[RMDB]
RNA sequence: GGGAACGACUCGAGUAGAGUCGAAAACAACGGUCAUCAUAUCCAUUGAUACUCGCCCAACAAUAGGAACUUUUCGUCCAUUGAUAAAGACAGGUGUGCCUUCAGGAGCAUUUCUUGGAUAACCAUCAUCUUAUCUUAUGUUCGCAUAAGAUAAGAUAAAAGAAACAACAACAACAAC
Reactivity to 2A3 in 0.01 (KOAc 150mM, MgCl2 10mM, bicine 150mM(pH8.5), 24C), signal-to-noise 9, nucleotides 027 to 126: c020a010a020c040g030g040u060c050a060u020c010a010u130a030u130c050c030a040u010u060g020a010u030a080c020u020c080g030c010c010c000a030a040c030a040a050u140a120g050g030a050a080c030u120u110u150u140c090g030u010c010c020a030u020u090g060a080u190a120a110a010g060a030c030a020g010g040u030g010u030g050c010c010u070u080c050a040g030g050a050g040c040a060u130u130u010c020u030u040g040g010a030u040a070a050c030c010a050u120c020
Reactivity to DMS in 0.01 (KOAc 150mM, MgCl2 10mM, bicine 150mM(pH8.5), 24C), signal-to-noise 9, nucleotides 027 to 126: c110a090a130c100g020g000u000c110a050u000c070a080u000a090u010c060c070a060u000u000g010a070u010a050c070u000c080g010c020c020c020a120a140c080a040a040u000a090g010g010a060a060c100u000u010u000u010c140g010u000c020c020a080u000u010g010a100u010a050a070a050g010a060c090a040g000g010u000g020u000g000c080c040u000u010c090a040g010g010a060g010c070a040u000u010u000c030u010u010g010g010a050u000a070a130c090c050a100u000c110

About this RNA:
Structure probing data (2A3 and DMS) for a 177-nucleotide construct. The RNA was probed in 150 mM KOAc, 10 mM MgCl2 and 150 mM bicine (pH 8.5) at 24 C. Reactivities are given for positions 27 through 126.